[RMDB]
RNA sequence: GGGAACGACUCGAGUAGAGUCGAAAAGAUGUUCGCUGAUUCGUCAGCCGCAUGCCCAGGUGGCCGCGAGCUUCAAGGCUACGGCGCGGAUAGGUCCGCGCUGAUCGUUUUCCUCCAACGACGCUAUAAAAGGAACGAAGGUUCGCCUUCGUUCCAACAGUUUUCAAUUGUUCGCAAUUGAAAACUGAAAAGAAACAACAACAACAAC
Reactivity to 2A3 in 0.01 (KOAc 150mM, MgCl2 10mM, bicine 150mM(pH8.5), 24C), signal-to-noise 4, nucleotides 027 to 156: g030a010u060g020u100u120c080g000c020u020g020a070u010u120c190g030u010c080a000g000c000c010g000c000a010u100g020c000c010c000a030g090g060u090g020g000c040c030g030c050g070a060g010c020u150u090c090a080a110g020g000c000u030a050c030g000g000c000g010c010g000g000a050u100a280g130g190u020c000c000g000c000g010c010u020g040a060u000c000g010u010u000u100u060c020c030u070c040c010a030a020c020g030a020c010g000c050u070a030u080a300a110a050a010g000g000a000a000c010g000a000a010g020g000u040u100c170g040c000c000u000u000c000g000u000u000c000c000a000a000
Reactivity to DMS in 0.01 (KOAc 150mM, MgCl2 10mM, bicine 150mM(pH8.5), 24C), signal-to-noise 1, nucleotides 027 to 156: g020a100u000g010u000u000c090g040c050u000g000a080u000u010c210g040u000c000a070g030c000c050g050c020a070u000g000c030c010c030a230g040g020u010g010g030c020c000g010c090g010a090g010c030u010u000c050a090a090g000g010c020u000a070c040g010g010c000g020c010g010g000a130u000a180g010g020u020c010c020g040c000g010c000u000g010a100u000c050g000u000u000u000u000c040c040u000c050c040a060a080c010g010a030c010g010c050u020a120u000a080a070a160a200g010g000a040a010c000g000a090a010g000g020u000u000c220g030c010c010u000u010c000g000u000u000c000c000a000a040